[RMDB]
RNA sequence: GGGAACGACUCGAGUAGAGUCGAAAAGGGCGUUCAUCUGUUGUCAUGCAGGUGCUGUGUGGGUGCAUGUGUGGGCAUCUGUACGUGUGUGUGCCCGUGCAUGUGUAUGUGAGGGCGUGUGUGUGCACACUCAUGCACGUGUGUGUAGGCUUAUGUAGUCCCAUACUGCGUUCGCGCAGUAUGGGACAAAAGAAACAACAACAACAAC
Reactivity to 2A3 in 0.01 (KOAc 150mM, MgCl2 10mM, bicine 150mM(pH8.5), 24C), signal-to-noise 1, nucleotides 027 to 156: g020g000g000c060g050u140u070c030a100u060c090u080g010u010u070g170u080c040a050u140g000c050a000g000g000u000g000c050u050g030u000g020u050g020g030g030u040g030c030a070u000g020u020g000u040g020g000g060c040a040u050c120u130g100u020a090c100g090u080g060u040g000u010g050u030g180c030c000c010g040u040g000c000a020u060g040u020g080u140a090u070g070u020g000a160g000g080g000c100g010u050g000u020g060u030g000u050g050c050a000c010a000c060u050c000a040u050g030c040a000c030g000u010g000u030g000u030g020u040a020g010g010c000u090u060a110u170g150u040a010

This 207-nucleotide RNA was probed chemically with 2A3. Source: RMDB library OK3TST, as collected in RNAgym. The RNA was probed in 150 mM KOAc, 10 mM MgCl2 and 150 mM bicine (pH 8.5) at 24 C.